The record gives the reactivity of an RNA of 177 nucleotides to DMS and 2A3. For DMS, 19,448 sequencing reads were counted. The reactions ran in a buffer of 150 mM KOAc, 10 mM MgCl2 and 150 mM bicine (pH 8.5), at 24 C. Source: RMDB library OK1LIB, as collected in RNAgym.
RNA sequence: GGGAACGACUCGAGUAGAGUCGAAAAGGGGCGCUGCUGGCCCCGCAGUCAAUCGAACCGUCGCGGCGAUGGGGUUUGCCGCUGGCUCUGACCGCAUCCGCUGUGGUUAUGGCCGCGGCGAUCUCAGCAUAUGAUCUGGGUUCGCCCAGAUCAUAUGAAAAGAAACAACAACAACAAC
Reactivity to DMS in 0.01 (KOAc 150mM, MgCl2 10mM, bicine 150mM(pH8.5), 24C), signal-to-noise 5, nucleotides 027 to 126: g000g010g000g010c040g010c070u020g000c070u010g000g010c010c010c020c020g010c090a040g000u030c080a110a100u020c080g000a120a130c030c020g000u010c050g010c030g010g000c040g010a090u010g000g000g000g010u000u010u030g020c010c000g000c020u030g030g010c000u010c130u000g000a010c000c000g000c010a020u030c200c160g000c190u010g030u010g010g010u000u010a010u000g000g020c000c010g010c010g000g000c010g000a000u000c000u000c020a110g000
Reactivity to 2A3 in 0.01 (KOAc 150mM, MgCl2 10mM, bicine 150mM(pH8.5), 24C), signal-to-noise 9, nucleotides 027 to 126: g010g010g010g010c070g020c100u180g020c080u100g090g020c020c000c000c000g000c000a010g040u090c040a020a140u090c050g060a040a050c030c020g050u080c040g010c020g050g000c030g050a070u080g000g010g000g030u020u060u300g010c000c010g010c080u110g000g010c010u010c010u050g000a010c000c000g000c010a030u070c070c200g050c230u010g010u010g000g010u010u020a050u100g020g000c000c000g000c000g010g000c000g000a000u000c000u000c010a020g000